[RMDB]
RNA sequence: GGGAACGACUCGAGUAGAGUCGAAAAGGGUUUGGAUUACAUCAAUAGUAACAUGAGCAGAAGUAAACAGAACAAGUAGUACUGCGGUUAUUCAAGUUCAAAGUUCACACUAUCGCAAUAAAGGGAAGGCUGUUCUAUAGUUCGCUAUAGAACAGCCAAAAGAAACAACAACAACAAC
Reactivity to 2A3 in 0.01 (KOAc 150mM, MgCl2 10mM, bicine 150mM(pH8.5), 24C), signal-to-noise 1, nucleotides 027 to 126: g050g010g000u100u050u040g060g000a080u050u070a000c000a030u080c060a070a070u030a070g070u060a010a090c080a120u080g040a030g010c020a000g020a220a000g070u000a120a100a020c060a050g060a010a020c090a110a000g140u090a010g040u060a050c060u020g050c040g050g060u060u000a030u040u030c020a010a050g040u050u020c010a150a100a070g020u040u050c090a060c020a000c120u090a090u080c020g000c040a110a000u110a220a120a010g010g050g030a250a000
Reactivity to DMS in 0.01 (KOAc 150mM, MgCl2 10mM, bicine 150mM(pH8.5), 24C), signal-to-noise 1, nucleotides 027 to 126: g000g010g000u000u000u000g000g020a100u020u000a020c020a180u000c090a050a090u000a090g000u020a020a110c010a070u000g040a100g020c020a090g000a150a060g020u000a040a020a100c120a010g000a140a050c090a020a060g000u010a040g010u000a040c020u000g000c060g000g000u000u020a040u000u000c050a040a060g000u000u010c020a020a080a140g010u000u000c050a050c100a030c050u000a060u020c050g010c060a030a010u000a010a070a100g020g000g020a100a110

An RNA of 177 nucleotides, treated with 2A3 and DMS and read out base by base.
Reactivities are rounded to 0.1 and cut off at 0 and 3.
The DMS profile rests on 714 reads.
DMS adducts were read by reverse transcription with MarathonRT.